[RMDB]
RNA sequence: GGGAACGACUCGAGUAGAGUCGAAAAGGCAAAUGGGGCCCCUCGCUCGUAUCUCCGAGAGGAGACGAGAAGGAGGUGGAUCUCCCUUUGCCAUCCGAGGGGAUUGCGUCCUCCUUACGGAUGCCCAAGCGGAUUUACUUCGGUAAAUCCAAAAGAAACAACAACAACAAC
Reactivity to DMS in 0.01 (KOAc 150mM, MgCl2 10mM, bicine 150mM(pH8.5), 24C), signal-to-noise 9, nucleotides 027 to 129: g000g000c030a020a010a030u070g030g000g000g030c010c020c010c010u020c000g000c000u000c020g010u030a130u030c010u000c000c000g050a210g000a220g030g000a010g010a030c000g020a020g000a040a070g050g020a000g020g030u120g030g010a080u030c040u020c020c010c030u000u010u000g000c010c020a030u020c020c010g010a170g030g020g000g010a020u040u110g060c150g040u010c010c030u050c020c050u040u050a080c050g020g010a000u040g030c000c000c010a110a100g040c220
Reactivity to 2A3 in 0.01 (KOAc 150mM, MgCl2 10mM, bicine 150mM(pH8.5), 24C), signal-to-noise 9, nucleotides 027 to 129: g010g000c010a000a010a030u230g000g000g010g010c000c000c000c000u000c000g040c000u000c000g080u120a210u060c000u000c000c000g040a040g010a050g080g000a000g000a010c000g010a000g010a020a100g210g010a000g010g060u300g050g010a100u080c090u070c010c000c000u000u000u000g000c000c000a000u000c000c000g000a030g000g020g010g010a030u080u270g140c100g100u050c000c020u060c010c000u070u120a060c020g000g010a010u040g010c000c000c010a020a020g140c100
This 170-nucleotide RNA was probed chemically with DMS and 2A3. Source: RMDB library 15KLIB, as collected in RNAgym. The RNA was probed in 150 mM KOAc, 10 mM MgCl2 and 150 mM bicine (pH 8.5) at 24 C.